[RMDB]
RNA sequence: GGGAACGACUCGAGUAGAGUCGAAAAUUUGAAACUAUUAUGCAGGCUCAUGCGAUAUUCUGCGGCAUAAUCAUCAGUGGCUACAGAGAGCGUCACGGAGGACAAUGGCCACCCUGCGUUCUACCAGCUUGAACUAGUUGUUCGCAACUAGUUCAAGAAAAGAAACAACAACAACAAC
Reactivity to DMS in 0.01 (KOAc 150mM, MgCl2 10mM, bicine 150mM(pH8.5), 24C), signal-to-noise 3, nucleotides 027 to 126: u000u000u030g010a090a110a130c120u020a040u000u000a040u000g010c010a060g010g010c020u010c070a040u000g020c070g010a090u030a080u000u000c040u000g000c060g020g010c000a010u010a110a030u010c180a060u020c080a070g040u010g020g000c000u000a090c150a080g000a110g000a070g030c080g010u010c050a040c090g000g000a070g000g000a030c070a070a070u000g010g000c040c060a060c090c000c010u010g010c100g010u000u000c020u000a140c080c060a170g000
Reactivity to 2A3 in 0.01 (KOAc 150mM, MgCl2 10mM, bicine 150mM(pH8.5), 24C), signal-to-noise 3, nucleotides 027 to 126: u130u050u100g050a100a040a030c050u020a030u210u030a020u160g000c030a000g130g020c000u020c110a030u220g020c050g070a030u040a140u280u090c060u050g050c000g010g010c020a050u110a140a290u140c010a000u020c020a010g030u010g080g000c010u030a050c080a020g180a020g010a030g200c060g020u040c010a000c050g020g020a030g000g000a020c040a040a190u050g030g000c030c000a040c020c010c010u050g010c040g000u000u000c030u070a150c020c040a020g030